[RMDB]
RNA sequence: GGGAACGACUCGAGUAGAGUCGAAAACUCUUUAACUAAUGAUGCCUAUUCACGAUUUUUGGGGUUGUUUAACAAGUAUAAGUACUUCUCUGGUGCUAUGGAAACAGCCGCUUAUCGUGAAGCUGCACAGUAAGGAAAAGUUCGCUUUUCCUUACUGAAAAGAAACAACAACAACAAC
Reactivity to DMS in 0.01 (KOAc 150mM, MgCl2 10mM, bicine 150mM(pH8.5), 24C), signal-to-noise 6, nucleotides 027 to 126: c030u000c030u000u000u010a070a140c170u010a090a100u010g010a180u000g010c010c100u000a190u000u000c000a010c010g000a020u000u000u000u000u000g010g010g020g020u000u010g010u000u000u000a070a090c060a040a100g000u000a060u010a090a050g010u000a060c130u010u010c230u010c170u000g000g040u000g000c000u000a060u000g000g000a060a020a020c010a010g000c000c000g000c000u000u000a010u000c010g010u000g000a020a010g000c210u010g000c040a100
Reactivity to 2A3 in 0.01 (KOAc 150mM, MgCl2 10mM, bicine 150mM(pH8.5), 24C), signal-to-noise 7, nucleotides 027 to 126: c010u020c010u070u190u100a100a080c080u070a120a120u150g110a050u040g000c000c020u080a150u050u010c000a010c010g010a010u020u110u040u080u190g100g010g000g020u010u010g030u020u030u010a120a050c030a040a020g060u040a060u030a180a020g010u010a040c040u140u120c110u010c060u220g040g010u020g010c000u030a050u120g020g010a020a010a000c010a000g000c000c040g170c140u010u020a010u010c000g000u000g000a000a010g000c020u020g000c020a010